[RMDB]
The data come from the RNA Mapping Database (RMDB), library OK2TRN.
Chemical mapping of a 177-nucleotide RNA with 2A3 and DMS.
The reactions ran in a buffer of 150 mM KOAc, 10 mM MgCl2 and 150 mM bicine (pH 8.5), at 24 C.
RNA sequence: GGGAACGACUCGAGUAGAGUCGAAAAGCCCCACCCGCUUAGUUUUGAUCCGCGCGGAGGAGCGCGUCCCGUGGUUGCCAUGGAGACCGCCGGACUGCGGAGGCCACAAACUGUGCGAAGGGGGAGGCUCGUACAGCUGAUUCGUCAGCUGUACGAGAAAAGAAACAACAACAACAAC
Reactivity to 2A3 in 0.01 (KOAc 150mM, MgCl2 10mM, bicine 150mM(pH8.5), 24C), signal-to-noise 1, nucleotides 027 to 126: g010c000c000c010c000a030c010c010c020g000c000u030u130a000g010u060u060u040u070g020a040u000c010c000g010c020g000c030g090g040a100g080g070a170g070c010g000c100g020u020c000c030c010g010u000g010g050u210u270g200c060c010a010u030g020g010a170g020a080c000c000g000c000c010g050g090a050c020u050g040c000g000g080a110g070g000c020c000a030c050a060a000a010c000u020g000u020g060c000g020a030a130g060g000g030g000g010a060g040g020
Reactivity to DMS in 0.01 (KOAc 150mM, MgCl2 10mM, bicine 150mM(pH8.5), 24C), signal-to-noise 2, nucleotides 027 to 126: g010c010c000c010c020a160c050c040c030g020c020u000u000a000g010u020u000u010u000g000a170u000c010c010g010c030g000c030g050g010a110g020g010a150g010c030g010c230g000u000c000c030c010g050u000g010g010u010u000g020c030c010a020u000g020g000a190g010a020c010c010g000c000c020g030g030a160c030u010g000c000g010g000a150g000g010c120c040a100c240a040a040a020c030u000g010u000g000c000g010a130a240g010g020g000g000g010a070g000g010
Reactivities are given for positions 27 through 126.